[RMDB]
RNA sequence: GGGAACGACUCGAGUAGAGUCGAAAAGAUGGUGCAGGCAGGGGUGAGGAGCGCAGCGGGCGGCGAGCGGGAGGCACUGGCCUCCAGAGCCCGUGGCCAAGGCGGGCCUCGCGGGCGGCGACGGAGCACGUCAUAUGAUUUUCGAAUCAUAUGACGUAAAAGAAACAACAACAACAAC
Reactivity to 2A3 in 0.01 (KOAc 150mM, MgCl2 10mM, bicine 150mM(pH8.5), 24C), signal-to-noise 5, nucleotides 027 to 126: g060a060u120g010g040u070g020c050a030g050g000c020a020g010g020g010g040u080g040a060g010g030a050g040c060g000c020a030g040c070g030g020g000c050g040g000c030g020a020g020c080g000g010g000a020g020g000c040a060c300u130g290g010c010c000u010c000c000a010g010a010g050c000c010c020g000u030g050g000c010c010a030a010g130g000c050g030g070g000c010c000u020c030g030c000g010g020g010c040g010g010c030g010a030c040g010g020a030g040c050
Reactivity to DMS in 0.01 (KOAc 150mM, MgCl2 10mM, bicine 150mM(pH8.5), 24C), signal-to-noise 8, nucleotides 027 to 126: g010a100u000g020g010u000g020c070a080g010g010c080a070g010g000g010g020u000g010a070g020g000a090g020c070g020c050a080g020c120g010g000g010c050g000g010c040g010a060g010c090g000g000g000a030g010g020c020a160c250u000g010g010c020c000u010c010c010a050g000a150g010c000c000c010g020u000g000g000c030c020a080a120g010g010c070g000g000g000c010c010u000c050g020c070g000g010g010c080g000g000c060g000a080c100g010g000a110g010c140